[RMDB]
RNA sequence: GGGAACGACUCGAGUAGAGUCGAAAACUUAACUGGCCAGAUAAGAAAAGACCGAGAGGUUCGAGCUUAUAGGGCAGAAAGCGGGGGACAGCAGUACUAAACAUUCCCUGUGGCUGAGACGAAGGUAAAAAGGGUCAUAACUUCGGUUAUGACCCAACAUCCGGUAAUAGUUCGCUAUUACCGGAUGAAAAGAAACAACAACAACAAC
Reactivity to DMS in 0.01 (KOAc 150mM, MgCl2 10mM, bicine 150mM(pH8.5), 24C), signal-to-noise 2, nucleotides 027 to 156: c020u000u000a100a100c000u000g040g000c040c030a210g000a060u000a020a060g010a060a190a120a150g010a040c030c000g000a230g020a270g000g020u010u000c010g000a300g000c000u000u000a020u000a080g040g010g010c000a060g000a060a040a080g000c050g040g030g070g000g040a060c060a090g000c000a130g000u000a300c040u010a060a080a080c100a120u000u010c010c000c000u000g040u000g010g020c030u000g000a100g000a100c050g000a110a080g030g010u000a020a070a110a140a140g000g010g010u010c000a020u000a030a020c000u010u010c300g010g040u000u000a010u000g000a000c010c000c000a000a010
Reactivity to 2A3 in 0.01 (KOAc 150mM, MgCl2 10mM, bicine 150mM(pH8.5), 24C), signal-to-noise 1, nucleotides 027 to 156: c010u110u040a000a070c040u030g140g040c000c000a040g000a140u030a040a000g040a050a250a010a010g040a000c010c000g030a030g000a010g110g050u150u080c010g000a010g010c000u050u030a030u070a110g000g000g000c010a020g040a050a050a030g060c070g000g020g000g000g000a020c020a030g000c020a000g060u100a060c040u110a090a050a000c020a020u030u040c020c000c010u040g030u040g040g000c010u020g000a010g010a080c070g070a090a020g050g000u140a040a010a000a000a050g000g000g000u000c000a000u000a010a000c000u010u050c100g000g010u000u000a010u000g000a000c000c020c000a000a000